[RMDB]
Description: An RNA of 207 nucleotides, treated with 2A3 and DMS and read out base by base. 2A3 adducts were read by reverse transcription with SuperScript II with manganese.
RNA sequence: GGGAACGACUCGAGUAGAGUCGAAAAAAACCUGACGCUGCGUGCCGCAGAACUGCGCCGCGGUAACCGCUCGCAAGCCGAGAACGCUACGAUCAUACUCGAAUUCGAUACGGCUAACGUCACCGUAGGUUUUGUCUGUAAUGCUUCGGUUGCGGAAACCUAAAGCUUUAUUCGUAAAGCUUUAGGUAAAAGAAACAACAACAACAAC
Reactivity to 2A3 in 0.01 (KOAc 150mM, MgCl2 10mM, bicine 150mM(pH8.5), 24C), signal-to-noise 5, nucleotides 027 to 156: a000a000a000c030c000u050g040a050c080g010c020u020g000c010g060u090g120c160c040g000c050a060g050a270a070c200u080g000c010g000c000c010g020c000g000g000u020a040a040c050c030g050c040u040c030g050c030a090a040g070c010c000g020a020g030a110a020c080g010c050u060a030c050g050a050u080c030a070u120a120c040u060c090g100a120a110u170u120c040g040a040u040a070c000g000g000c040u060a160a040c050g080u060c100a010c020c010g020u020a050g040g000u030u030u070u150g030u000c040u040g070u070a140a100u110g020c010u030u020c010g020g000u020u020g000c000g010g010a110a040
Reactivity to DMS in 0.01 (KOAc 150mM, MgCl2 10mM, bicine 150mM(pH8.5), 24C), signal-to-noise 4, nucleotides 027 to 156: a060a030a060c020c010u010g010a090c050g010c010u000g020c010g010u010g030c040c040g050c020a110g020a100a080c080u000g010c040g020c040c080g000c020g010g010u000a040a070c050c030g030c040u000c030g040c060a070a050g030c030c000g000a110g010a080a090c070g010c030u000a090c050g030a100u000c090a160u010a070c050u000c040g020a130a120u000u000c020g010a110u000a020c010g010g010c020u000a070a060c050g020u000c090a060c040c010g000u000a040g010g010u000u000u000u000g010u010c030u010g010u010a090a080u010g010c020u010u000c070g020g010u000u010g010c040g000g000a160a120